[RMDB]
RNA sequence: GGGAACGACUCGAGUAGAGUCGAAAAAUCAGGAAGAGGAAGAAAAGAGGGUCUGAGAGCGGUGGGCAUGGGAACAUGGAGGAAAGCCCAAACUCUUCUUCGCCUCUAGAACUAGGGGCUGAGAUUUAUACAAGGAGAACUUCGGUUCUCCUUGUAUAAAAGAAACAACAACAACAAC
Reactivity to 2A3 in 0.01 (KOAc 150mM, MgCl2 10mM, bicine 150mM(pH8.5), 24C), signal-to-noise 3, nucleotides 027 to 126: a000u060c030a030g060g020a040a040g010a010g080g020a020a040g060a030a170a020a000g040a040g000g020g050u050c070u120g060a030g000a020g110c040g000g040u060g040g020g030c040a060u070g010g010g020a080a040c030a030u080g020g030a040g020g070a070a030a070g030c010c000c000a020a080a070c040u030c040u050u000c000u030u020c020g000c000c000u010c010u010a030g080a110a090c160u020a010g020g000g000g000c030u020g020a030g000a000u000u020u010
Reactivity to DMS in 0.01 (KOAc 150mM, MgCl2 10mM, bicine 150mM(pH8.5), 24C), signal-to-noise 3, nucleotides 027 to 126: a060u000c050a110g000g000a050a020g000a020g000g010a100a060g000a040a070a030a030g000a070g000g000g020u030c070u010g000a070g000a100g020c110g010g000u000g000g000g020c090a040u000g010g000g010a090a070c090a060u020g010g000a050g020g010a050a040a100g010c010c010c000a070a030a060c080u030c060u010u010c020u000u020c300g020c000c010u010c010u000a010g010a110a100c110u010a000g000g000g020g000c010u040g000a010g000a090u020u000u010